Background: The data come from the RNA Mapping Database (RMDB), library OK2TST. The record gives the reactivity of an RNA of 177 nucleotides to DMS and 2A3. The reactions ran in a buffer of 150 mM KOAc, 10 mM MgCl2 and 150 mM bicine (pH 8.5), at 24 C. High DMS reactivity at an A or C suggests that its Watson-Crick edge is free. The 2A3 profile rests on 12,356 reads.
RNA sequence: GGGAACGACUCGAGUAGAGUCGAAAAGCAACGCCAUAGGCUUCCAGCGACUGCUGGUGAUGUUUCUGGUAAGUUAGAGCUUGGGGCAGUGCGGACCAGUUCUGUGAACGGCUCAGUGGCAGAAUUACUCUAAAUAAGAGUUCGCUCUUAUUUAGAGAAAAGAAACAACAACAACAAC
Reactivity to DMS in 0.01 (KOAc 150mM, MgCl2 10mM, bicine 150mM(pH8.5), 24C), signal-to-noise 9, nucleotides 027 to 126: g010c050a070a080c090g010c010c010a040u000a090g000g010c010u000u010c020c010a050g000c040g010a090c150u010g010c040u010g010g010u010g010a070u000g010u000u010u000c020u000g000g010u010a050a080g010u000u000a080g010a070g010c020u000u000g020g000g010g010c030a050g020u000g010c040g000g000a120c090c070a090g010u000u000c020u000g020u000g010a080a100c090g010g010c060u000c070a100g020u000g000g010c020a060g000a090a070u010u010a130
Reactivity to 2A3 in 0.01 (KOAc 150mM, MgCl2 10mM, bicine 150mM(pH8.5), 24C), signal-to-noise 6, nucleotides 027 to 126: g020c010a030a030c050g000c000c010a060u060a050g110g020c010u090u030c020c000a010g010c020g160a200c150u170g010c030u060g030g090u070g050a100u140g050u030u090u000c030u020g030g020u090a100a070g010u060u110a060g010a010g060c020u080u120g010g000g030g000c010a010g020u010g040c000g010g010a050c000c030a020g020u060u000c020u040g050u020g070a130a030c030g040g010c020u020c050a030g010u040g050g000c010a010g020a010a010u090u050a060